[RMDB]
RNA sequence: GGGAACGACUCGAGUAGAGUCGAAAAGAAAUCUUGUUCACAACCAAACUCUACUUGUCCUUCUGAGUGUGAUUACGCCCAUGGAGUAGCUCAGGAGGCAAACAGGGUUACCCUGUGGAUAGGUCAACAUUCACACUAAAUUCGUUUAGUGUGAAUGAAAAGAAACAACAACAACAAC
Reactivity to 2A3 in 0.01 (KOAc 150mM, MgCl2 10mM, bicine 150mM(pH8.5), 24C), signal-to-noise 9, nucleotides 027 to 126: g090a010a110a020u070c020u030u040g010u020u010c010a010c010a060a060c040c060a100a040a010c010u020c000u030a100c070u050u030g130u300c010c000u000u000c000u000g000a010g010u060g020u110g130a170u130u170a060c040g070c020c040c020a080u250g090g030a090g030u070a010g010c000u000c000a000g000g000a000g000g000c000a000a000a000c070a010g010g000g000u000u020a040c020c020c030u020g000u000g000g010a010u010a020g020g020u060c040a030a030
Reactivity to DMS in 0.01 (KOAc 150mM, MgCl2 10mM, bicine 150mM(pH8.5), 24C), signal-to-noise 9, nucleotides 027 to 126: g010a100a120a060u010c020u000u000g030u000u000c000a020c010a030a100c150c140a130a090a030c010u000c000u000a160c090u000u000g000u030c010c000u000u000c000u000g000a010g010u000g020u030g010a130u020u010a030c050g010c040c030c170a130u020g010g010a080g010u000a120g000c000u000c000a010g000g000a010g000g010c010a010a010a120c100a010g000g000g000u000u000a090c210c150c060u000g000u000g000g000a010u000a020g000g000u010c140a080a140

Background
This 177-nucleotide RNA was probed chemically with 2A3 and DMS. The reactions ran in a buffer of 150 mM KOAc, 10 mM MgCl2 and 150 mM bicine (pH 8.5), at 24 C. For DMS the reverse transcriptase was MarathonRT.